[RMDB]
RNA sequence: GGGAACGACUCGAGUAGAGUCGAAAACCGCACUUCUUCGGAAGUGCGGAAAUACCGAGAUUGUACCUCGGUAGAAGUACAUAACCCUUGGAAACAAGGGUAAAAGCGUGAGCUUCGGCUCACGCAACAACCUCCGUCUGUUCGCAGACGGAGGUUGAAAAGAAACAACAACAACAAC
Reactivity to DMS in 0.01 (KOAc 150mM, MgCl2 10mM, bicine 150mM(pH8.5), 24C), signal-to-noise 1, nucleotides 027 to 126: c020c000g000c000a020c000u010u000c010u000u030c300g020g000a000a000g030u010g030c000g000g000a000a060a030u000a060c000c000g090a020g040a090u000u010g000u010a300c050c000u000c000g010g010u000a000g000a110a120g020u000a050c290a030u000a140a070c020c000c000u000u000g000g000a160a060a280c000a000a000g000g000g000u000a000a070a080a090g000c030g000u000g000a000g000c030u000u030c250g020g000c000u000c000a010c000g010c050a040a010